[RMDB]
RNA sequence: GGGAACGACUCGAGUAGAGUCGAAAAGAUAUGGAGAAUCAUCACGGUCCGGUAAUACUCGGAAACGAGUGCCAGGAUUGAUGAGUUCUCCUAAGUCAAAACAAACGUCUGUUCGCAGACGUUUGAAGAAAGGAAUAAGCUUCGGCUUAUUCCUUUCAAAAGAAACAACAACAACAAC
Reactivity to DMS in 0.01 (KOAc 150mM, MgCl2 10mM, bicine 150mM(pH8.5), 24C), signal-to-noise 4, nucleotides 027 to 126: g000a050u000a300u010g000g020a000g020a020a050u000c010a030u000c010a080c300g020g010u000c000c010g010g000u000a050a080u020a230c000u000c000g000g000a050a070a110c000g000a000g050u000g030c000c020a110g050g010a060u010u000g000a010u000g000a050g000u000u000c000u000c000c000u000a010a060g000u000c040a070a030a100a200c010a000a010a000c000g000u000c010u000g000u010u010c190g000c010a020g000a010c000g020u000u010u000g000a050a070
Reactivity to 2A3 in 0.01 (KOAc 150mM, MgCl2 10mM, bicine 150mM(pH8.5), 24C), signal-to-noise 2, nucleotides 027 to 126: g000a030u050a020u100g020g000a000g030a020a020u040c040a000u020c020a030c300g210g020u020c000c030g040g000u090a220a100u140a300c000u000c010g030g000a030a030a010c010g000a010g000u010g000c030c020a100g030g030a070u100u140g000a030u030g000a020g060u030u000c000u000c000c010u010a040a010g010u020c010a000a010a120a220c010a030a000a000c000g000u000c000u040g070u100u120c300g000c140a000g020a000c000g000u000u000u010g000a000a060

Structure probing data (DMS and 2A3) for a 177-nucleotide construct. Source: RMDB library TTRDEL, as collected in RNAgym. 2A3 adducts were read by reverse transcription with SuperScript II with manganese. Reactivities are given for positions 27 through 126.